[RMDB]
RNA sequence: GGGAACGACUCGAGUAGAGUCGAAAAAAGGAGAAUUUGCUUAUGACAGUACCAGCACCUGAUGUGUUUGCCAAAUUGCUUCUUAGUGUUAACACUUCUUAUUGGGUUUGUGAUGAAACUGCACUAGCAGUAGUCUUAAAUUCGUUUAAGACUACUGAAAAGAAACAACAACAACAAC
Reactivity to 2A3 in 0.01 (KOAc 150mM, MgCl2 10mM, bicine 150mM(pH8.5), 24C), signal-to-noise 8, nucleotides 027 to 126: a000a000g110g010a080g030a060a050u070u070u080g010c020u110u060a060u160g070a040c010a030g030u050a060c020c030a020g030c030a030c020c030u060g030a120u070g060u010g010u030u060u070g030c020c000a030a090a110u070u090g080c030u050u040c000u040u070a040g010u030g020u130u070a080a020c020a010c020u060u040c030u060u180a210u120u140g070g000g030u080u110u080g050u030g050a100u060g030a060a050a040c040u060g000c020a020c050u020a030g020
Reactivity to DMS in 0.01 (KOAc 150mM, MgCl2 10mM, bicine 150mM(pH8.5), 24C), signal-to-noise 9, nucleotides 027 to 126: a050a040g000g000a050g010a070a050u000u000u000g010c030u000u000a070u000g010a100c050a040g010u000a100c080c040a060g000c060a080c100c040u000g010a070u000g010u000g010u000u000u000g010c090c040a030a050a070u000u000g010c030u000u000c030u000u000a050g020u000g010u000u010a060a080c060a030c040u000u000c050u000u000a110u000u000g010g010g010u000u000u000g010u000g010a100u010g000a070a050a070c100u000g010c040a050c080u000a120g010